[RMDB]
RNA sequence: GGGAACGACUCGAGUAGAGUCGAAAAGAAGCGCCGAAAAAUGCGUGUAAAUAAAAGGUCAAUAUGACCUGACAGUGAUACCAAAUUAAAUGGGUCGAAGUCUCGCCAAAAUACGCAACAAAUAGAAUAAUCGUUUGUUAUUCGUAACAAACGAUUAAAAAGAAACAACAACAACAAC
Reactivity to 2A3 in 0.01 (KOAc 150mM, MgCl2 10mM, bicine 150mM(pH8.5), 24C), signal-to-noise 3, nucleotides 027 to 126: g040a090a000g040c040g030c040c020g060a000a060a030a030a030u050g000c020g000u060g020u050a010a040a080u210a020a040a010a020g010g000u000c030a070a160u180a160u300g000a000c000c000u010g010a010c020a030g040u030g130a030u160a300c000c010a050a040a010u200u190a020a090a110u100g030g000g000u020c010g010a040a000g020u030c030u030c030g070c040c010a030a070a020a050u130a040c030g000c020a010a060c000a060a180a090u210a050g130a080a000
Reactivity to DMS in 0.01 (KOAc 150mM, MgCl2 10mM, bicine 150mM(pH8.5), 24C), signal-to-noise 4, nucleotides 027 to 126: g010a100a140g020c070g020c030c050g000a020a060a090a140a110u000g000c010g020u000g010u000a050a110a090u000a060a070a090a030g000g010u000c000a190a120u010a120u000g000a010c000c000u000g000a040c050a060g020u010g010a030u000a060c010c020a030a080a130u000u010a060a080a100u020g000g000g010u000c020g000a120a140g010u000c000u010c100g020c040c050a040a040a070a070u000a030c060g010c030a050a060c160a050a060a080u000a040g020a120a100